This 177-nucleotide RNA was probed chemically with DMS.
The data come from the RNA Mapping Database (RMDB), library TTRINS.
The RNA was probed in 150 mM KOAc, 10 mM MgCl2 and 150 mM bicine (pH 8.5) at 24 C.
RNA sequence: GGGAACGACUCGAGUAGAGUCGAAAAGAUAUGGAAAGAACUACAGCUUGUUCUCCAACAGCACGACGUUAAGCUCGGAAACGAGCUUAACGUCGUGACAUGGAGGUAGAGCUGCUUUCCUAAGUCAUCUAGAACCUUAGUUCGCUAAGGUUCUAGAAAAAGAAACAACAACAACAAC
Reactivity to DMS in 0.01 (KOAc 150mM, MgCl2 10mM, bicine 150mM(pH8.5), 24C), signal-to-noise 3, nucleotides 027 to 126: g030a050u010a300u020g010g000a010a020a000g010a140a030c120u020a300c020a000g010c000u000u000g010u020u020c010u000c000c010a040a120c300a230g000c020a020c010g050a020c000g010u000u000a000a030g010c000u010c000g010g010a060a140a240c000g050a010g020c000u000u000a000a000c000g020u000c000g010u010g000a010c030a130u010g000g010a030g020g000u020a230g020a020g000c000u000g010c000u000u000u000c000c000u010a100a130g020u010c050a170